[RMDB]
Structure probing data (DMS and 2A3) for a 177-nucleotide construct. DMS adducts were read by reverse transcription with MarathonRT. The 2A3 profile rests on 8,043 reads. For 2A3 the reverse transcriptase was SuperScript II with manganese.
RNA sequence: GGGAACGACUCGAGUAGAGUCGAAAAGAUAUGGACGGAGCGAUAAGCUAGUGUCGGAAACGACACAUAGCUUUUGACGCUCCAGUCCUAAGUCAAACCUCUGGUGUUCUUCGGAACACCAGAGGAACAACAUCUUUCUCUUCGGAGAAAGAUGUUGAAAAGAAACAACAACAACAAC
Reactivity to DMS in 0.01 (KOAc 150mM, MgCl2 10mM, bicine 150mM(pH8.5), 24C), signal-to-noise 3, nucleotides 027 to 126: g010a000u000a070u010g010g010a010c000g000g000a010g010c000g010a060u000a020a010g040c010u000a000g010u000g010u000c010g000g010a010a020a050c000g010a020c000a000c020a040u000a010g000c000u000u000u000u000g010a300c030g000c000u000c010c000a030g010u000c000c000u010a010a050g000u000c010a120a140a200c000c010u010c000u000g000g010u000g000u000u000c000u000u010c200g020g010a010a000c000a010c000c000a000g000a000g020g000a000a050
Reactivity to 2A3 in 0.01 (KOAc 150mM, MgCl2 10mM, bicine 150mM(pH8.5), 24C), signal-to-noise 2, nucleotides 027 to 126: g000a010u030a010u040g000g010a010c000g010g000a000g010c020g040a080u050a300a010g000c010u010a010g000u010g000u000c000g000g010a030a030a010c000g010a010c010a000c010a060u020a000g010c000u000u050u060u080g010a010c000g010c000u000c000c000a000g000u000c000c000u010a040a000g020u020c060a110a040a170c010c000u000c000u020g000g020u000g010u010u020c000u030u100c300g140g000a010a000c000a000c010c000a000g000a000g000g010a000a000